This 177-nucleotide RNA was probed chemically with 2A3. Source: RMDB library OK1LIB, as collected in RNAgym. Conditions: 150 mM KOAc, 10 mM MgCl2 and 150 mM bicine (pH 8.5), 24 C. 2A3 adducts were read by reverse transcription with SuperScript II with manganese. The 2A3 profile rests on 752 reads.
RNA sequence: GGGAACGACUCGAGUAGAGUCGAAAAGAAGUACAGAAGCUUGUCGAUCACUGUGAAACAACAAAACAGUGCUCGGAGGUUUUGUUGUUUACAUAAGGCUUGAACUUAGCGAUGUACGAAAGAAAAAGGGUGUGCAUAUGUUCGCAUAUGCACACCCAAAAGAAACAACAACAACAAC
Reactivity to 2A3 in 0.01 (KOAc 150mM, MgCl2 10mM, bicine 150mM(pH8.5), 24C), signal-to-noise 1, nucleotides 027 to 126: g030a230a000g000u010a030c010a000g040a180a000g120c000u030u010g000u060c000g000a110u000c010a000c280u010g000u000g140a000a000a050c000a000a070c000a000a050a000a000c010a020g080u020g080c030u020c070g020g110a110g140g000u000u000u010u000g000u000u000g000u010u000u010a210c000a000u000a040a020g030g000c020u000u010g010a090a020c020u090u020a050g020c000g010a020u040g000u060a000c000g020a000a030a100g140a010a050a050a020a020